[RMDB]
The record gives the reactivity of an RNA of 207 nucleotides to 2A3 and DMS. DMS adducts were read by reverse transcription with MarathonRT.
RNA sequence: GGGAACGACUCGAGUAGAGUCGAAAAUUAAAAUCUGCCUUGCACCGCUGUCCUAAGGAUUUGAGAUAAAGCAUACAAAGGGCUUGGCACAUAGUAGGUGCUCCUAAAUGGUAACUUUAUUCUUCACAUCAGGCUUUGCUUAUACUUAUAAAAGCCAAGUACUAUAAUCCUUCGGGAUUAUAGUACUAAAAGAAACAACAACAACAAC
Reactivity to 2A3 in 0.01 (KOAc 150mM, MgCl2 10mM, bicine 150mM(pH8.5), 24C), signal-to-noise 3, nucleotides 027 to 156: u060u020a000a040a030a090u070c040u050g020c010c000u020u030g020c050a030c040c030g010c060u070g040u080c010c020u040a050a060g100g000a070u030u040u080g030a040g000a010u050a030a060a000g010c050a060u080a190c040a050a090a020g040g010g000c040u060u040g080g110c070a000c010a010u160a010g130u040a030g020g100u030g000c020u100c020c010u070a150a130a080u120g050g000u020a030a030c020u070u070u080a080u170u070c030u050u100c060a030c000a090u190c040a010g040g000c000u050u030u040g020c010u130u140a090u090a260c040u130u160a060u130a230a090a050a010g020c060c010a010
Reactivity to DMS in 0.01 (KOAc 150mM, MgCl2 10mM, bicine 150mM(pH8.5), 24C), signal-to-noise 2, nucleotides 027 to 156: u000u010a100a070a080a070u000c030u010g010c030c030u010u000g000c040a060c030c030g060c050u000g000u020c000c010u030a050a140g020g020a130u000u000u010g010a120g010a090u000a020a010a090g000c040a140u000a080c020a030a240a260g000g010g020c300u010u000g020g010c040a000c040a050u010a200g010u000a130g030g020u000g000c040u000c040c010u000a040a080a090u010g000g030u000a040a030c050u000u000u000a050u000u000c020u000u000c020a060c110a090u010c020a120g020g010c010u000u000u000g020c060u020u010a130u010a100c070u000u010a140u000a040a040a040a080g000c000c010a110
DMS (dimethyl sulfate) methylates the pairing face of unpaired adenines and cytosines.